[RMDB]
RNA sequence: GGGAACGACUCGAGUAGAGUCGAAAACACGACCAGGACCUGCGUCGUUUGACCCGUCACCUUGGUUCCGUACGGGAAGGCCGGGUCGAACCCUGCCCCGAUCUUCUGGAGGGUGGCGGUGUAGGUGAUUGAAGAGCCUUUUCGAAGGCUCUUCAAUAAAAGAAACAACAACAACAAC
Reactivity to 2A3 in 0.01 (KOAc 150mM, MgCl2 10mM, bicine 150mM(pH8.5), 24C), signal-to-noise 1, nucleotides 027 to 126: c070a020c020g020a020c000c010a000g000g160a030c030c010u030g000c070g040u030c030g020u050u010u300g070a030c000c000c000g000u020c000a000c020c010u050u040g130g000u240u030c010c020g030u100a080c090g000g040g040a050a010g050g000c050c030g000g000g020u020c000g000a010a020c030c030c020u030g070c000c020c000c020g110a160u040c020u110u070c030u070g100g040a040g020g000g000u030g000g000c020g010g000u040g000u020a000g000g110u100g040
Reactivity to DMS in 0.01 (KOAc 150mM, MgCl2 10mM, bicine 150mM(pH8.5), 24C), signal-to-noise 3, nucleotides 027 to 126: c080a130c040g000a050c020c030a130g000g030a050c090c020u010g020c190g010u010c020g040u000u010u000g000a090c030c010c010g010u000c050a020c010c000u000u000g020g000u000u000c040c040g010u020a130c130g000g010g010a020a010g000g000c050c000g010g010g010u000c060g010a080a140c100c110c050u000g010c200c010c000c020g010a040u000c060u000u000c030u010g010g020a150g000g020g000u000g010g010c010g010g000u010g020u000a010g020g020u010g000